[RMDB]
RNA sequence: GGGAACGACUCGAGUAGAGUCGAAAACCUAAGGACAUUUUAUUGUCUAUGGAUGCAGUUCACAGGCCAGAUGGCAAUGGGUAUCCUAGUGGGAUAUAUAUAUAUGGAUGCUUAAGAUAUGGUCGAGAUAAAUCACAGGAUUCGUCCUGUGAUUUAUAAAAGAAACAACAACAACAAC
Reactivity to 2A3 in 0.01 (KOAc 150mM, MgCl2 10mM, bicine 150mM(pH8.5), 24C), signal-to-noise 7, nucleotides 027 to 126: c010c000u020a070a060g070g000a010c000a010u080u110u120u190a150u260u060g000u000c010u010a050u080g060g020a030u090g050c070a050g110u110u160c060a050c040a110g050g030c020c000a040g000a130u150g120g010c030a040a060u080g020g010g010u020a000u000c000c000u020a070g090u140g050g090g030a020u030a000u010a000u010a000u010a000u020a040u210g020g010a010u020g040c000u040u040a070a080g030a110u070a090u090g040g000u010c020g010a020g010
Reactivity to DMS in 0.01 (KOAc 150mM, MgCl2 10mM, bicine 150mM(pH8.5), 24C), signal-to-noise 8, nucleotides 027 to 126: c000c000u010a060a140g000g010a020c020a010u000u030u020u020a060u030u000g010u000c000u000a260u030g010g000a110u010g000c100a080g010u020u000c090a110c100a170g000g000c010c010a030g010a090u010g000g000c040a060a070u010g010g010g000u010a020u000c010c010u000a090g010u000g010g000g000a120u010a060u010a090u030a080u020a070u010a080u000g010g000a040u010g000c020u000u010a080a220g000a060u000a080u000g010g010u000c020g000a110g000
An RNA of 177 nucleotides, treated with 2A3 and DMS and read out base by base. It was measured as part of the RMDB libraries RFM100 and RFMREP. Conditions: 150 mM KOAc, 10 mM MgCl2 and 150 mM bicine (pH 8.5), 24 C.